[RMDB]
RNA sequence: GGGAACGACUCGAGUAGAGUCGAAAAGAGUACAUAUGCCCAGCCUUACUGGUCCGGCUGGAUGCUUCGUGCAAAUGCUAUGUACGCCUACGUAUAUGUGCGUAGAUGCCUAUAUUUUCUCUCCUGAGAAAAUAUAGAUGCAUACAAAGGACAUGCACUCGUCCCUUUUAUUCGUAAAAGGGACGAGAAAAGAAACAACAACAACAAC
Reactivity to DMS in 0.01 (KOAc 150mM, MgCl2 10mM, bicine 150mM(pH8.5), 24C), signal-to-noise 1, nucleotides 027 to 156: g010a160g040u000a010c030a100u000a080u010g000c010c020c050a090g020c040c040u000u000a160c110u000g020g030u000c030c140g040g040c020u000g030g010a180u000g010c010u010u000c140g000u030g120c040a070a110a180u010g040c000u000a080u000g010u000a020c020g050c000c010u000a000c030g020u000a060u000a120u000g000u000g070c030g050u010a030g010a030u000g000c010c000u000a010u000a000u000u000u000u000c000u010c020u020c300c240u000g010a070g010a030a000a030a020u000a000u000a000g020a060u030g080c010a060u000a130c050a110a080a110g000g000a080c080a130u000g030c060a240
Reactivity to 2A3 in 0.01 (KOAc 150mM, MgCl2 10mM, bicine 150mM(pH8.5), 24C), signal-to-noise 3, nucleotides 027 to 156: g040a030g000u010a020c000a000u040a030u300g000c020c000c000a010g010c000c000u120u210a150c080u270g130g050u100c060c010g010g000c010u010g030g010a030u090g010c020u110u180c240g130u150g000c020a050a020a090u250g030c000u020a000u020g000u010a000c010g040c000c000u050a020c000g050u050a090u050a030u220g160u060g050c020g010u010a020g010a090u040g010c000c000u000a000u000a000u010u000u010u000c010u000c010u020c040c160u190g000a000g000a000a000a000a000u000a000u020a000g030a020u140g010c000a010u040a130c030a010a130a010g060g000a020c010a020u050g040c010a040